The data come from the RNA Mapping Database (RMDB), library OK3TST.
Chemical mapping of a 207-nucleotide RNA with DMS and 2A3.
For 2A3, 1,152 sequencing reads were counted.
Values cover nucleotides 27 to 156.
2A3 adducts were read by reverse transcription with SuperScript II with manganese.
DMS adducts were read by reverse transcription with MarathonRT.
The reactions ran in a buffer of 150 mM KOAc, 10 mM MgCl2 and 150 mM bicine (pH 8.5), at 24 C.
RNA sequence: GGGAACGACUCGAGUAGAGUCGAAAAUGGUCAUUUUUUUCAUGUCAAUAAAAAGGUAAAAUGUAGAAUGUAGUUAACGUUAAUCAGGUAGAUAAAGGAUGCAAACUAGGGGUGGGGUGAGGCUGUGCAUGAUUCCGUCUAUGCAAAUCAGUCAAGAUAUAAUCGGUAGUUUCGACUACCGAUUAUAAAAAGAAACAACAACAACAAC
Reactivity to DMS in 0.01 (KOAc 150mM, MgCl2 10mM, bicine 150mM(pH8.5), 24C), signal-to-noise 2, nucleotides 027 to 156: u000g030g010u030c030a000u000u020u030u000u020u040u000c050a080u000g010u010c050a120a130u010a060a050a060a070a080g020g010u000a060a030a040a050u010g030u000a080g000a080a050u010g030u010a040g020u000u010a050a110c070g010u000u000a100a120u000c040a070g000g030u000a050g010a070u000a060a040a080g010g020a070u010g010c000a050a060a080c040u000a110g010g010g050g040u010g020g000g020g010u000g010a140g010g020c010u000g010u000g030c010a070u010g000a080u000u000c040c050g000u000c030u000a070u010g020c000a050a050a050u010c030a030g010u000c060a020a080g000a250
Reactivity to 2A3 in 0.01 (KOAc 150mM, MgCl2 10mM, bicine 150mM(pH8.5), 24C), signal-to-noise 2, nucleotides 027 to 156: u030g040g000u060c060a120u010u020u020u020u030u060u190c110a080u060g020u040c020a000a060u110a170a050a020a000a000g050g020u100a060a130a070a050u090g000u040a020g060a170a070u080g030u040a040g050u080u120a070a020c090g010u020u050a010a070u070c020a010g000g020u020a020g000a050u040a100a000a060g020g000a000u020g030c050a020a090a070c040u070a030g000g030g000g000u020g030g000g000g000u040g020a020g020g000c010u030g010u020g010c000a010u060g000a040u040u040c010c030g000u020c020u020a020u020g020c040a000a030a100u110c020a010g040u020c050a040a060g080a050